[RMDB]
RNA sequence: GGGAACGACUCGAGUAGAGUCGAAAAGAUAUGGACUAGUCCAGGAUUGUCAUCCAGACAUGCUCCAUGGUCGGAAACGACCAUUGAGCAACAGCUGGUAUGACAAUCCUGGACUAGUCCUAAGUCACCUUAAUCAUACGUUCGCGUAUGAUUAAGGAAAAGAAACAACAACAACAAC
Reactivity to DMS in 0.01 (KOAc 150mM, MgCl2 10mM, bicine 150mM(pH8.5), 24C), signal-to-noise 3, nucleotides 027 to 126: g010a050u000a300u000g020g000a020c000u000a010g010u000c000c000a010g000g000a010u000u000g000u000c010a000u000c000c000a010g000a060c100a270u000g010c000u010c000c100a010u000g010g030u000c000g000g000a140a110a300c010g010a020c010c000a000u000u010g010a010g000c000a020a070c260a160g010c000u000g010g000u000a000u000g000a000c000a000a000u000c000c010u010g000g000a000c000u000a000g000u000c000c010u000a000a070g000u000c040a300